[RMDB]
RNA sequence: GGGAACGACUCGAGUAGAGUCGAAAAGAGCCAGCAUUGGUGAUCAUGCUGGGCGAAUACCCGGGACGCAGCAUGAUCACCGUCGAGCGACUCGCGCAAAACGUCAACGACUGCGGGCGGUACGGCCAGAAACAGUCAUUUUCGAAUGACUGUUUCUAAAAGAAACAACAACAACAAC
Reactivity to 2A3 in 0.01 (KOAc 150mM, MgCl2 10mM, bicine 150mM(pH8.5), 24C), signal-to-noise 9, nucleotides 027 to 126: g080a020g050c020c020a030g020c060a120u080u290g000g000u010g010a010u000c000a000u000g000c000u030g020g080g000c020g040a050a090u220a190c030c020c000g020g050g010a040c050g010c090a000g000c000a010u010g000a000u000c000a000c000c000g010u020c020g030a050g030c020g100a140c020u010c030g020c000g010c050a030a050a080a100c040g070u080c060a080a060c070g050a030c030u080g010c030g020g010g000c010g010g020u070a050c030g020g010c010c030
Reactivity to DMS in 0.01 (KOAc 150mM, MgCl2 10mM, bicine 150mM(pH8.5), 24C), signal-to-noise 7, nucleotides 027 to 126: g010a130g010c010c000a080g020c090a100u020u020g020g020u000g000a000u000c000a000u000g010c020u000g000g020g020c060g000a170a120u030a080c050c030c030g000g000g000a220c050g020c000a020g000c000a010u000g000a010u000c000a000c010c000g030u010c040g000a150g010c070g010a070c050u010c060g010c060g010c080a050a040a080a070c120g000u010c070a090a150c090g000a050c050u000g010c030g000g000g000c030g000g010u010a070c080g000g000c070c080
This 177-nucleotide RNA was probed chemically with 2A3 and DMS. The data come from the RNA Mapping Database (RMDB), library OK1LIB. The 2A3 profile rests on 20,177 reads. For DMS, 24,173 sequencing reads were counted. 2A3 is a SHAPE reagent: it acylates the 2'-hydroxyl of flexible nucleotides of all four kinds. Reactivities are given for positions 27 through 126. DMS adducts were read by reverse transcription with MarathonRT. The reactions ran in a buffer of 150 mM KOAc, 10 mM MgCl2 and 150 mM bicine (pH 8.5), at 24 C.